[RMDB]
RNA sequence: GGGAACGACUCGAGUAGAGUCGAAAACAUCCUCGCGACUAAUGACAACCCUUAACCCCCAUGAGUUAAAGUCUCUCAUUAGCCGCGCGAACCUCUGCACCGGAAGAUCCUAUGUUUUAAAAAUAUACUAAUCCACAUAUUUCGAUAUGUGGAUUAGAAAAGAAACAACAACAACAAC
Reactivity to 2A3 in 0.01 (KOAc 150mM, MgCl2 10mM, bicine 150mM(pH8.5), 24C), signal-to-noise 5, nucleotides 027 to 126: c040a080u050c000c000u010c000g000c010g020a030c010u030a030a020u070g020a030c020a020a070c050c000c020u060u090a040a030c010c000c020c000c040a080u110g020a020g050u040u080a070a070a060g050u010c010u000c000u000c070a020u030u030a010g020c010c000g000c000g000c020g030a050a040c000c010u020c010u030g010c010a020c010c010g040g030a040a020g030a060u030c010c020u070a070u120g050u030u050u040u090a080a110a030a050a010u170a010u000a120
Reactivity to DMS in 0.01 (KOAc 150mM, MgCl2 10mM, bicine 150mM(pH8.5), 24C), signal-to-noise 4, nucleotides 027 to 126: c140a110u010c030c030u010c010g030c040g020a050c110u000a040a030u010g000a060c140a100a110c090c020c040u000u020a090a140c040c010c000c060c080a100u000g020a050g010u010u010a050a080a110g010u000c030u000c190u000c020a030u000u010a040g030c030c020g020c030g000c130g000a080a070c020c020u010c020u010g000c010a030c030c030g000g000a080a090g010a060u010c010c020u010a050u010g010u000u000u000u000a010a070a080a060a100u020a090u040a160